An RNA of 177 nucleotides, treated with 2A3 and DMS and read out base by base. For 2A3, 4,895 sequencing reads were counted. For DMS, 4,277 sequencing reads were counted. The reactions ran in a buffer of 150 mM KOAc, 10 mM MgCl2 and 150 mM bicine (pH 8.5), at 24 C. It was measured as part of the RMDB library OK2TST.

RNA sequence: GGGAACGACUCGAGUAGAGUCGAAAAGCCGAACUGUUGGGCGACGACGAAGAGAAGAAGGCAGCCCGCCAACGCGAUCCGGCUGGCACGCUGCUGGCCGAACAGCUCGACUGGUGGAUCGAACACAGUCAAAUCUCUUAUUCGUAAGAGAUUUGACAAAAGAAACAACAACAACAAC
Reactivity to 2A3 in 0.01 (KOAc 150mM, MgCl2 10mM, bicine 150mM(pH8.5), 24C), signal-to-noise 3, nucleotides 027 to 126: g030c010c010g000a050a040c050u080g050u100u080g110g010g020c040g020a040c040g010a020c030g070a140a070g090a020g000a190a000g040a050a040g010g000c010a010g000c040c010c000g010c030c020a060a040c060g040c040g080a050u010c030c020g030g010c040u010g000g000c030a010c100g070c040u100g000c000u020g030g010c000c000g030a050a010c010a010g000c000u050c050g070a090c050u080g070g060u080g020g040a030u060c040g020a080a020c130a010c040a050
Reactivity to DMS in 0.01 (KOAc 150mM, MgCl2 10mM, bicine 150mM(pH8.5), 24C), signal-to-noise 5, nucleotides 027 to 126: g030c030c000g030a020a040c060u000g020u000u000g010g000g010c030g020a140c110g000a210c080g000a130a100g010a140g000a070a150g020a260a150g000g010c010a080g010c040c150c060g020c020c030a030a040c070g010c030g000a080u000c070c020g020g010c020u000g010g000c010a120c300g020c100u010g000c000u000g000g010c010c010g000a030a020c070a060g020c030u010c040g000a090c030u000g000g000u000g010g020a060u000c030g000a080a070c190a070c200a100